RNA sequence: GGGAACGACUCGAGUAGAGUCGAAAAGAAUUGGUAUGUAAGCUACUGCUUCCGGUAGCUGCGUCACACUUUAAGAGUGUGCAUACUGAGCCGAAGCUCAGCUUCGGUCCCCCAAGGGAAGGCCAAAAGUAGUACGCCCGUUCGCGGGCGUACUACUAAAAGAAACAACAACAACAAC
Reactivity to 2A3 in 0.01 (KOAc 150mM, MgCl2 10mM, bicine 150mM(pH8.5), 24C), signal-to-noise 1, nucleotides 027 to 126: g060a000a030u030u010g010g000u030a000u000g000u000a000a000g000c000u000a000c000u000g060c000u000u000c000c000g000g000u000a010g000c000u000g000c000g000u010c000a000c000a000c000u220u240u230a300a120g130a000g130u000g000u000g020c000a000u030a000c000u000g000a000g000c000c000g010a010a010g000c050u180c300a030g000c030u100u000c000g010g000u030c000c000c000c000c030a090a060g040g030g000a000a000g010g000c050c030a100a100a000